[RMDB]
RNA sequence: GGGAACGACUCGAGUAGAGUCGAAAAUCAAUCAUGUUCGCAUGAUUGAAAAGGUCAGGUGACCAAACCUCGACACGCGUCGAAGCGACCGAGCCCGGAGGCAAAGUGCAAUCUUCGGAUUGCACAAACUAGAUCGUAUCUUCGGAUACGAUCUAGUAAAAGAAACAACAACAACAAC
Reactivity to DMS in 0.01 (KOAc 150mM, MgCl2 10mM, bicine 150mM(pH8.5), 24C), signal-to-noise 3, nucleotides 027 to 126: u000c000a010a000u000c000a000u000g010u000u020c170g010c000a020u010g010a010u000u000g000a010a070a070a120g000g010u000c000a120g010g010u010g020a120c100c070a050a140a120c030c010u000c020g000a010c040a110c150g010c110g010u000c040g000a070a080g020c050g010a130c030c030g000a080g000c080c000c040g000g030a070g000g000c130a060a060a120g000u000g000c000a000a010u000c000u000u000c190g000g000a030u010u000g000c000a000c000a010a050

An RNA of 177 nucleotides, treated with DMS and read out base by base. Reactivities are given for positions 27 through 126. Conditions: 150 mM KOAc, 10 mM MgCl2 and 150 mM bicine (pH 8.5), 24 C. The data come from the RNA Mapping Database (RMDB), library M2PK50. For DMS, 2,499 sequencing reads were counted.